[RMDB]
RNA sequence: GGGAACGACUCGAGUAGAGUCGAAAAACGGAUAGAUUCGUCUAUCCGUGCAUCUCAUAACAGACAGAGAAAGUCUGCUAAGAUCUGACUUAGAUAAAGAGAAGAGAGUCGAGUUCGCUCGACUCAACUAUGAAAGACUCUUCGGAGUCUUUCAUAGAAAAGAAACAACAACAACAAC
Reactivity to 2A3 in 0.01 (KOAc 150mM, MgCl2 10mM, bicine 150mM(pH8.5), 24C), signal-to-noise 3, nucleotides 027 to 126: a010c000g010g000a000u010a010g000a000u050u070c150g030u010c080u030a000u000c000c020g000u000g020c010a050u020c010u000c020a030u070a120a060c010a010g040a020c020a000g240a020g180a300a190a020g030u000c020u000g030c010u020a030a010g020a080u050c080u230g110a070c020u100u040a020g040a100u140a170a230a030g070a010g050a120a040g080a020g000a010g020u000c000g000a000g000u080u070c250g020c030u000c000g000a000c000u000c000a000a000
Reactivity to DMS in 0.01 (KOAc 150mM, MgCl2 10mM, bicine 150mM(pH8.5), 24C), signal-to-noise 3, nucleotides 027 to 126: a010c000g000g010a020u000a000g000a010u000u010c170g020u000c000u000a000u010c010c000g020u000g010c120a140u000c010u010c010a050u010a050a130c020a020g010a020c000a060g000a240g000a130a220a090g000u000c000u000g010c010u000a020a020g000a050u000c040u010g000a100c080u000u000a030g000a120u010a030a060a050g000a090g000a100a110g010a160g000a010g010u000c000g020a010g020u000u020c220g010c010u000c000g010a010c000u000c020a020a100
The record gives the reactivity of an RNA of 177 nucleotides to 2A3 and DMS. Values cover nucleotides 27 to 126. The RNA was probed in 150 mM KOAc, 10 mM MgCl2 and 150 mM bicine (pH 8.5) at 24 C. High 2A3 reactivity points to a flexible backbone, as in loops and unpaired stretches.